[RMDB]
RNA sequence: GGGAACGACUCGAGUAGAGUCGAAAACAAUUUUAUGCACUAACAACAUUUUUCUCAGCUACUAAAGGUCAAAUAACUGUAAAAUCGUGGUUCCCUCCCCCGAACCUGUGGCAGGUGCCCCCCAGCAGCCUUAGAGAGUAUUCGUACUCUCUAAGGCAAAAGAAACAACAACAACAAC
Reactivity to DMS in 0.01 (KOAc 150mM, MgCl2 10mM, bicine 150mM(pH8.5), 24C), signal-to-noise 3, nucleotides 027 to 126: c050a070a060u040u000u040u010a070u030g020c060a040c040u000a070a080c160a070a070c100a090u000u010u020u000u000c010u000c030a100g000c050u000a030c090u030a040a080a100g000g020u000c090a060a050a080u020a050a100c070u010g010u000a040a060a050a070u010c090g020u000g000g020u010u000c030c010c000u000c000c000c000c010c010g010a060a110c020c010u000g010u010g010g020c050a040g020g010u030g010c010c000c010c000c010c020a100g010c200a160
Reactivity to 2A3 in 0.01 (KOAc 150mM, MgCl2 10mM, bicine 150mM(pH8.5), 24C), signal-to-noise 6, nucleotides 027 to 126: c030a040a050u080u070u120u130a130u150g050c040a040c050u130a150a030c130a010a040c020a070u070u080u000u130u000c040u030c050a020g020c000u040a010c000u080a160a100a050g080g000u050c070a050a050a130u100a120a050c060u070g090u190a080a090a020a060u080c080g030u040g030g020u050u010c000c010c000u020c010c000c000c000c000g040a020a010c000c020u020g000u060g070g000c030a020g000g070u040g020c000c000c000c000c000c000a020g030c060a010
This 177-nucleotide RNA was probed chemically with DMS and 2A3. DMS adducts were read by reverse transcription with MarathonRT. For 2A3 the reverse transcriptase was SuperScript II with manganese. DMS (dimethyl sulfate) methylates the pairing face of unpaired adenines and cytosines. For DMS, 5,867 sequencing reads were counted. Values are in units of 0.01, from 0 to 300, in steps of 10.